[RMDB]
RNA sequence: GGGAACGACUCGAGUAGAGUCGAAAAGACACUCCGCUGGGUGGGAUGGAGGUAUCUGGAGUAUCCUGAAGCGCGCACGGGAUACGAUGAAAGAUACUCCCCACCCAUACCCACCUGUGCUGAAGCGCGCACGGCAACCGAAAGGUGCGAGAAACAACUCAGAUUAUCAGUUCGCUGAUAAUCUGAGAAAAGAAACAACAACAACAAC
Reactivity to 2A3 in 0.01 (KOAc 150mM, MgCl2 10mM, bicine 150mM(pH8.5), 24C), signal-to-noise 1, nucleotides 027 to 156: g040a000c010a020c060u060c010c010g000c010u010g000g000g000u000g000g040g000a010u000g010g000a000g000g070u010a000u000c000u010g020g020a000g000u000a010u010c000c000u010g050a230a150g000c010g020c000g030c000a010c010g010g000g000a020u030a030c000g070a230u040g000a000a000a000g000a000u050a000c020u110c030c050c030c040a050c030c000c000a010u000a010c000c010c000a010c000c000u000g000u000g010c000u050g040a150a040g000c000g000c000g000c010a000c000g020g010c010a010a010c010c010g030a060a040a050g030g000u020g020c050g020a130g020a140a120a000c010a010a010
Chemical mapping of a 207-nucleotide RNA with 2A3.
The 2A3 profile rests on 1,220 reads.